[RMDB]
RNA sequence: GGGAACGACUCGAGUAGAGUCGAAAACAGAACAGCUGACUCCACCAGCUCAAAGACUCCCACAGAAGCCAGGAGCAGUGGCUCACGCCUAUAAUCCCAAUGCCUGUAAUCCCAGCACUUUGGGAGGCCAAAGCAGUGGACUGCUUGAGCCCAGGAAGUCCGUAUUACUCUUCGGAGUAAUACGGACAAAAGAAACAACAACAACAAC
Reactivity to 2A3 in 0.01 (KOAc 150mM, MgCl2 10mM, bicine 150mM(pH8.5), 24C), signal-to-noise 1, nucleotides 027 to 156: c030a000g100a030a020c050a000g010c000u020g060a080c050u000c000c030a050c040c000a030g010c000u000c050a120a040a060g070a200c020u020c010c030c000a000c000a070g150a130a000g000c020c050a030g000g050a040g000c030a030g060u060g080g040c010u060c050a010c020g070c030c000u130a120u060a100a130u120c000c040c000a040a030u140g060c000c020u010g050u130a030a110u030c010c000c010a020g040c090a060c110u060u080u010g020g010g020a020g030g000c030c030a070a030a000g000c000a000g000u140g030g120a120c050u020g000c000u010u040g020a030g020c030c000c000a010g040g030a050a020